[RMDB]
RNA sequence: GGGAACGACUCGAGUAGAGUCGAAAACGCGGCACCGUCGCCGGCCGGCAGGCGCUGGUGAUCGAGAACCUAUCCACGUCGGCCGCGCAGCUGACCACCGGGCAGCUCGGCCUGCAGCGCGUGGUCACAUAUGCUUCCUUUUCGAAGGAAGCAUAUGAAAAGAAACAACAACAACAAC
Reactivity to 2A3 in 0.01 (KOAc 150mM, MgCl2 10mM, bicine 150mM(pH8.5), 24C), signal-to-noise 8, nucleotides 027 to 126: c040g000c020g020g000c020a020c060c080g110u090c030g010c030c010g020g020c010c000g040g040c070a070g060g000c050g020c150u050g010g030u030g020a130u140c070g020a030g060a160a030c020c030u060a090u090c040c030a060c070g050u040c030g040g000c010c010g030c020g000c020a040g040c040u050g010a020c000c000a010c020c020g000g020g000c000a010g020c020u090c150g180g010c040c000u010g000c000a040g210c010g020c050g000u000g000g000u000c010a010
Reactivity to DMS in 0.01 (KOAc 150mM, MgCl2 10mM, bicine 150mM(pH8.5), 24C), signal-to-noise 9, nucleotides 027 to 126: c070g010c040g010g010c020a120c080c060g010u000c050g020c020c020g010g010c020c020g010g010c100a090g000g010c090g010c100u000g000g010u000g000a080u010c080g010a130g010a130a120c070c040u000a120u010c060c070a090c110g000u000c060g000g000c000c010g010c100g020c080a090g010c140u000g010a020c020c020a040c070c020g000g000g010c010a030g010c040u010c160g020g010c120c010u000g000c010a030g010c010g010c100g020u000g000g010u000c020a080
The data come from the RNA Mapping Database (RMDB), library OK2TST. This 177-nucleotide RNA was probed chemically with 2A3 and DMS. The reactions ran in a buffer of 150 mM KOAc, 10 mM MgCl2 and 150 mM bicine (pH 8.5), at 24 C. DMS adducts were read by reverse transcription with MarathonRT. For 2A3 the reverse transcriptase was SuperScript II with manganese.